[RMDB]
The record gives the reactivity of an RNA of 207 nucleotides to 2A3. For 2A3 the reverse transcriptase was SuperScript II with manganese. The reactions ran in a buffer of 150 mM KOAc, 10 mM MgCl2 and 150 mM bicine (pH 8.5), at 24 C. Source: RMDB library M2RFPK, as collected in RNAgym. For 2A3, 905 sequencing reads were counted.
RNA sequence: GGGAACGACUCGAGUAGAGUCGAAAAAAAAGAUUUCUGAGACAAACACGCUUCACACUGUGCGGCAAAGAAACAUUGUUUAUGCAAAGGCACUUCGCAAUGUGUGCUCAAACAUUGCUUAUUCAAAAAAAGAUUUUAGACUUCGGUCUAAAAUCAAGGAAGUAAGUAUCUUCGGAUACUUACUUCCAAAAGAAACAACAACAACAAC
Reactivity to 2A3 in 0.01 (KOAc 150mM, MgCl2 10mM, bicine 150mM(pH8.5), 24C), signal-to-noise 1, nucleotides 027 to 156: a010a000a000a050g080a020u120u130u060c040u080g040a030g030a070c130a010a150a040c040a030c120g010c030u080u020c020a040c020a020c030u100g000u010g040c030g010g000c020a020a020a040g070a030a100a030c030a040u020u060g030u060u150u110a150u120g060c060a130a060a000g100g000c000a000c020u030u030c030g000c000a010a020u000g010u010g050u010g020c030u120c170a010a010a030c000a020u000u000g020c000u080u170a150u180u160c120a010a050a030a030a010a000a050g010a010u000u010u000u000a010g000a010c000u000u010c250g100g000u010c000u000a000a000a000a110u000c000a000a000